[RMDB]
RNA sequence: GGGAACGACUCGAGUAGAGUCGAAAAUUGCACAUCGGUGAUCUUUAGAUGACAUCACUUCAAUCUGACUGGACCACAGUACCCUGCCUCCCAAGUAGGGUGAGCUCUGAGGCGGGAGGGCCAGGGCGAACUAGCAUCCCUUCGGGGAUGCUAGUUCAAAAGAAACAACAACAACAAC
Reactivity to 2A3 in 0.01 (KOAc 150mM, MgCl2 10mM, bicine 150mM(pH8.5), 24C), signal-to-noise 2, nucleotides 027 to 126: u090u170g010c000a000c000a110u110c100g060g030u020g010a070u000c030u080u160u090a180g010a170u110g050a030c020a120u000c020a020c040u060u030c070a010a180u040c050u050g070a070c030u050g050g050a040c020c080a040c040a100g040u070a070c000c000c020u020g000c000c000u000c000c000c000a020a000g030u000a020g000g000g040u000g000a040g000c010u000c000u050g070a060g080g010c010g030g010g030a040g010g030g070c090c000a000g020g000g000c000
Reactivity to DMS in 0.01 (KOAc 150mM, MgCl2 10mM, bicine 150mM(pH8.5), 24C), signal-to-noise 2, nucleotides 027 to 126: u030u030g020c020a140c110a040u000c100g030g030u000g000a080u000c050u000u020u000a090g020a100u000g000a060c150a080u000c060a030c090u000u000c090a080a110u010c030u010g010a060c090u020g020g010a100c050c060a050c140a090g010u000a140c010c000c000u000g000c000c000u000c010c010c000a080a300g000u010a060g000g020g000u000g020a060g010c080u010c010u000g020a100g020g010c270g000g010g000a010g000g010g030c090c030a040g000g000g040c230